[RMDB]
RNA sequence: GGGAACGACUCGAGUAGAGUCGAAAAGGGGUCUGACUGAGACCGAUGAAAUGAUUGACAUGUUCUGAAGCCUCCACGGAACAACAGCAAUCAUGGAGGUCGAGAUGAGUCAGACGGAGGCACCCAAAAUCCUCCGCUGAUUCGUCAGCGGAGGAAAUACACCAUAGACGUUCGCGUCUAUGGUGUAAAAAGAAACAACAACAACAAC
Reactivity to DMS in 0.01 (KOAc 150mM, MgCl2 10mM, bicine 150mM(pH8.5), 24C), signal-to-noise 1, nucleotides 027 to 156: g000g010g020g030u010c000u000g020a100c000u040g010a300g000a020c000c010g020a070u090g010a150a150a030u000g000a040u000u000g010a070c050a300u000g000u000u010c000u000g010a050a120g020c000c000u000c030c060a300c000g000g000a060a030c000a070a100c030a260g010c040a030a010u000c000a020u000g010g000a080g030g040u000c000g010a300g000a150u020g000a030g000u000c020a050g000a060c030g010g000a120g020g040c020a070c020c000c000a030a050a080a140u000c000c000u010c000c000g000c010u010g010a090u000u000c300g020u000c000a010g010c010g060g010a050g000g010a000a000a050
Reactivity to 2A3 in 0.01 (KOAc 150mM, MgCl2 10mM, bicine 150mM(pH8.5), 24C), signal-to-noise 1, nucleotides 027 to 156: g170g000g000g020u000c000u000g010a000c000u010g050a020g000a070c000c000g010a120u020g000a020a020a020u010g010a010u010u000g060a120c070a180u180g020u000u040c010u000g030a120a010g020c030c000u000c000c030a010c010g050g030a000a000c030a040a000c020a040g270c020a000a000u000c000a000u000g010g010a020g000g000u000c000g020a060g060a090u300g000a020g000u000c000a000g000a010c020g000g000a020g000g000c010a060c000c000c000a100a050a000a070u050c000c000u030c000c000g000c000u000g070a070u040u070c200g060u020c130a000g000c010g020g000a000g000g030a000a030a000
The record gives the reactivity of an RNA of 207 nucleotides to DMS and 2A3. High 2A3 reactivity points to a flexible backbone, as in loops and unpaired stretches. The 2A3 profile rests on 1,006 reads. The DMS profile rests on 1,400 reads. DMS adducts were read by reverse transcription with MarathonRT. The reactions ran in a buffer of 150 mM KOAc, 10 mM MgCl2 and 150 mM bicine (pH 8.5), at 24 C.